Structure probing data (DMS and 2A3) for a 177-nucleotide construct. The DMS profile rests on 2,348 reads. It was measured as part of the RMDB library OK2TST. The reactions ran in a buffer of 150 mM KOAc, 10 mM MgCl2 and 150 mM bicine (pH 8.5), at 24 C.
RNA sequence: GGGAACGACUCGAGUAGAGUCGAAAAGGAGUUCUUCUCCUCGCAGUACGGGAAUGUGAUACUCGACGAGGUGGGCAGGGUGGUCUCGCGCCUGGAGGGGGUCGCAGGCGGGCUUUCCGAGGUGCUGAAUUAUGAGUCUGUUCGCAGACUCAUAAUUAAAAGAAACAACAACAACAAC
Reactivity to DMS in 0.01 (KOAc 150mM, MgCl2 10mM, bicine 150mM(pH8.5), 24C), signal-to-noise 2, nucleotides 027 to 126: g030g000a040g010u010u010c140u010u020c050u000c010c010u000c110g020c080a090g010u000a080c110g010g020g010a130a100u000g010u000g000a130u000a080c040u010c060g010a150c090g000a090g010g010u020g010g010g020c120a070g000g000g030u000g010g000u000c040u000c030g010c050g010c020c030u000g000g010a110g010g000g010g020g030u010c090g010c050a050g020g010c080g000g010g000c090u000u000u000c050c020g000a080g000g020u000g010c040u000g000
Reactivity to 2A3 in 0.01 (KOAc 150mM, MgCl2 10mM, bicine 150mM(pH8.5), 24C), signal-to-noise 1, nucleotides 027 to 126: g050g030a050g030u060u080c040u160u060c000u000c000c000u000c010g060c030a010g070u070a010c000g020g000g050a190a080u210g060u070g130a060u060a160c020u070c080g080a040c030g020a100g040g070u230g020g060g010c060a110g040g010g010u070g050g040u040c070u020c030g070c000g000c010c030u020g010g030a100g020g030g000g010g030u080c070g000c030a010g030g070c000g060g000g050c010u060u090u000c010c030g040a010g030g030u040g040c010u040g040